The record gives the reactivity of an RNA of 207 nucleotides to DMS and 2A3.
RNA sequence: GGGAACGACUCGAGUAGAGUCGAAAAGUUAGGCGAGGCUCCUAUACAAACACAGGUUUCUGAUCUGACGACGUCGAGAGACGCCCAAGAUUAGGACAGGAUAUAUCGAACCAAGGUAUAUCCCCAUAAAACUCGGAACACUUCGGUGUUCCGAGAAGUUGGAGUUAUAGUUCGCUAUAACUCCAACAAAAGAAACAACAACAACAAC
Reactivity to DMS in 0.01 (KOAc 150mM, MgCl2 10mM, bicine 150mM(pH8.5), 24C), signal-to-noise 2, nucleotides 027 to 156: g030u010u010a040g000g000c030g010a300g030g000c060u000c000c000u000a130u010a080c060a060a080a060c090a070c100a160g010g010u010u000u000c040u000g020a030u000c020u000g010a160c020g000a010c010g000u000c020g010a300g000a300g010a020c020g000c010c010c070a170a050g000a060u000u000a060g030g010a060c140a120g000g030a050u020a030u010a040u010c000g030a140a300c130c150a050a130g000g010u000a040u000a030u020c000c010c040c040a130u010a020a100a120a160c000u000c000g020g010a010a010c000a020c000u000u000c270g030g010u010g010u010u010c000c000g020a000g010a000a020
Reactivity to 2A3 in 0.01 (KOAc 150mM, MgCl2 10mM, bicine 150mM(pH8.5), 24C), signal-to-noise 4, nucleotides 027 to 156: g020u030u010a020g010g010c110g060a070g070g040c110u060c050c010u100a100u070a180c080a030a150a010c090a010c050a120g120g020u030u110u040c010u010g000a010u000c010u040g020a020c020g010a020c000g000u010c010g010a000g010a010g000a160c000g000c000c000c010a010a010g000a010u020u030a010g010g010a000c020a010g000g000a000u000a000u010a000u010c020g030a060a100c060c030a090a030g000g000u000a000u000a000u020c010c010c000c000a110u260a070a160a040a040c000u000c000g010g000a010a000c000a000c000u020u080c160g060g000u000g000u000u000c000c000g000a000g000a000a010

Source information: DMS adducts were read by reverse transcription with MarathonRT. The 2A3 profile rests on 4,033 reads. The reactions ran in a buffer of 150 mM KOAc, 10 mM MgCl2 and 150 mM bicine (pH 8.5), at 24 C. Source: RMDB library M2RFPK, as collected in RNAgym.